Conditions: 150 mM KOAc, 10 mM MgCl2 and 150 mM bicine (pH 8.5), 24 C. The record gives the reactivity of an RNA of 177 nucleotides to 2A3 and DMS. Values cover nucleotides 27 to 126. Reactivities are rounded to 0.1 and cut off at 0 and 3. The DMS profile rests on 2,844 reads. DMS adducts were read by reverse transcription with MarathonRT.
RNA sequence: GGGAACGACUCGAGUAGAGUCGAAAAGUGCGCCGCUAUUCAUCUAUCAUUCCAGAGGAUUCAUGCUCUGAGUUCAAACAUGGGGAUCUCUCAUAGAUGUUAAAUCUUUCAUACUGCACGUUAGAAAGGGAUAACAUUUGUUCGCAAAUGUUAUCCCAAAAGAAACAACAACAACAAC
Reactivity to 2A3 in 0.01 (KOAc 150mM, MgCl2 10mM, bicine 150mM(pH8.5), 24C), signal-to-noise 6, nucleotides 027 to 126: g040u030g010c030g010c000c000g010c040u050a080u070u080c010a020u000c030u050a070u040c050a110u140u060c030c020a010g000a020g030g010a030u020u060c020a010u110g040c030u020c020u100g090a110g090u070u140c100a060a090a090c020a060u040g020g000g040g060a050u020c050u000c000u000c040a030u040a050g020a030u030g040u070u080a040a090a040u050c020u020u090u010c020a020u060a070c010u040g060c010a010c080g040u030u040a050g050a080a050a010
Reactivity to DMS in 0.01 (KOAc 150mM, MgCl2 10mM, bicine 150mM(pH8.5), 24C), signal-to-noise 2, nucleotides 027 to 126: g030u000g010c000g010c000c010g020c040u010a090u010u000c070a030u020c000u010a020u000c190a120u010u000c130c140a030g000a060g000g000a070u040u000c060a010u030g010c140u040c070u010g000a060g000u020u010c060a090a110a110c050a040u010g000g000g000g000a060u010c030u000c040u010c050a030u000a020g000a020u000g010u000u000a070a080a070u020c060u020u000u010c060a130u020a020c050u010g010c050a020c020g030u010u020a160g000a070a110a150